[RMDB]
About this RNA: Structure probing data (2A3 and DMS) for a 177-nucleotide construct. Values cover nucleotides 27 to 126. The data come from the RNA Mapping Database (RMDB), library OK1LIB. Values are in units of 0.01, from 0 to 300, in steps of 10. The DMS profile rests on 15,023 reads.
RNA sequence: GGGAACGACUCGAGUAGAGUCGAAAACAACUGUCUUAUUCGGGAAUGCAAGGUUACAGUCUGUUUAGAGAAGUUUUAAUUGCGACAAAAUGGAAGCCUAAACAAGCUAUAUUGAAUCUAUGGAUGGGAGUGAUAAUCAAUUCGUUGAUUAUCACUCAAAAGAAACAACAACAACAAC
Reactivity to 2A3 in 0.01 (KOAc 150mM, MgCl2 10mM, bicine 150mM(pH8.5), 24C), signal-to-noise 9, nucleotides 027 to 126: c010a020a030c020u040g050u040c030u080u200a150u130u110c050g040g010g090a080a070u150g050c040a060a050g060g030u130u070a060c020a030g030u000c030u030g060u010u050u040a030g020a010g020a100a020g030u030u030u020u170a150a160u150u120g050c060g060a060c090a050a140a010a010u070g070g010a060a050g030c020c010u050a050a040a020c040a050a020g010c020u040a040u020a060u190u120g050a020a020u010c040u070a140u130g090g010a040u050g030g110
Reactivity to DMS in 0.01 (KOAc 150mM, MgCl2 10mM, bicine 150mM(pH8.5), 24C), signal-to-noise 6, nucleotides 027 to 126: c060a090a160c080u010g000u000c050u000u020a080u000u020c060g000g000g010a060a050u020g010c070a040a050g010g020u010u010a060c100a040g000u000c070u000g000u000u010u010a010g000a060g000a150a090g000u000u000u010u030a080a090u020u020g010c120g010a090c130a030a020a040a060u000g000g000a080a120g000c110c010u000a010a030a040c040a030a060g000c030u010a090u010a060u020u010g010a060a070u010c040u010a060u010g000g010a100u000g000g000